[RMDB]
RNA sequence: GGGAACGACUCGAGUAGAGUCGAAAAGGGCAACUGUUGCACAGCGCGCAACAGUUGGCGCUGACCAGGGGACAUUGUUCUGAUGGUCGACGUCCCCACGACGCCGGUCCUCGCGACCAUUCCUCGUGUCGAGCUCGGCUCGGUCGGCACGUGGGACCGUCGAUUAUAGCUUCGGCUAUAAUCGACGAAAAGAAACAACAACAACAAC
Reactivity to 2A3 in 0.01 (KOAc 150mM, MgCl2 10mM, bicine 150mM(pH8.5), 24C), signal-to-noise 2, nucleotides 027 to 156: g020g000g010c000a010a000c010u010g020u000u000g030c080a100c110a180g130c150g000c020g000c060a000a000c000a000g010u000u000g000g010c020g040c030u060g000a030c000c040a070g100g000g000g000a020c110a230u150u290g080u120u040c040u020g150a200u050g020g000u000c020g020a020c020g020u000c000c020c000c000a030c060g200a020c060g030c040c020g020g000u010c010c010u140c080g040c110g000a000c010c020a040u070u080c000c000u030c000g000u020g010u020c010g020a030g030c040u080c160g180g000c100u050c080g000g070u020c010g000g000c000a020c010g010u120g000g030g010a010c050
Chemical mapping of a 207-nucleotide RNA with 2A3. Reactivities are given for positions 27 through 156. Values are in units of 0.01, from 0 to 300, in steps of 10. The RNA was probed in 150 mM KOAc, 10 mM MgCl2 and 150 mM bicine (pH 8.5) at 24 C.